Conditions: 150 mM KOAc, 10 mM MgCl2 and 150 mM bicine (pH 8.5), 24 C. Chemical mapping of a 207-nucleotide RNA with 2A3. As a SHAPE reagent, 2A3 marks flexible, mostly unpaired nucleotides at the ribose 2'-OH. The data come from the RNA Mapping Database (RMDB), library M2RFOK.
[RMDB]
RNA sequence: GGGAACGACUCGAGUAGAGUCGAAAAAGCACGGUUUUUGAGGACGCAUUUUGUCCGUGCGGUAAUGCCCUCCUUUACACUUUCUCGCAUGGUGCGGGAGUGUGGAGAGGAUACAAAAGCUAGUCUCGAUAGGCGGUUAACUUCGGUUAACCGCCAACACCCCUUAUGCGUUCGCGCAUAAGGGGUGAAAAGAAACAACAACAACAAC
Reactivity to 2A3 in 0.01 (KOAc 150mM, MgCl2 10mM, bicine 150mM(pH8.5), 24C), signal-to-noise 2, nucleotides 027 to 156: a000g000c000a000c000g000g010u020u020u020u010u020g060a090g040g000a020c050g010c120a150u010u000u000u010g000u000c000c000g000u010g000c010g000g050u160a080a030u150g010c000c000c000u070c010c000u010u020u020a000c000a000c010u110u160u040c010u000c000g020c020a080u300g270g030u230g200c000g000g010g000a000g000u010g000u020g000g000a030g000a010g010g000a030u010a080c000a000a010a000a000g050c010u110a020g030u010c010u000c030g070a130u090a120g000g000c010g000g000u010u000a000a000c020u020u060c060g010g000u000u000a000a000c040c000g000c000c000a000a000